Chemical mapping of a 207-nucleotide RNA with 2A3. It was measured as part of the RMDB library RNAMAK.
RNA sequence: GGGAACGACUCGAGUAGAGUCGAAAAGCGUACUACAGCUCGACACAUUCGUUGAAAGUAUAUUGGCUCAAUCCCAAAUAGGAUUGAGCAGGUACUGGAGAAUGUGCGAGCUGUAUCGCAAAACCACUCGGGACAUGUUCGCAUGUCCCGAGUGGAAGUUUGUCUGACUGUUCGCAGUCAGACAAACAAAAGAAACAACAACAACAAC
Reactivity to 2A3 in 0.01 (KOAc 150mM, MgCl2 10mM, bicine 150mM(pH8.5), 24C), signal-to-noise 1, nucleotides 027 to 156: g000c000g040u020a050c100u000a010c010a010g000c000u010c040g110a060c010a000c000a000u010u000c000g230u230u030g020a040a020a010g000u000a000u000a140u060u280g200g000c010u000c000a000a000u000c020c020c040a190a260a130u300a080g000g010a000u000u000g000a000g000c000a000g000g000u000a000c010u020g020g040a000g000a010a000u000g000u000g020c000g000a000g030c000u000g000u000a000u050c000g000c000a000a000a000a040c000c000a000c000u000c010g000g000g010a000c000a000u010g040u080u130c230g000c180a000u000g000u000c000c030c000g000a000g000u000g000g000a000a000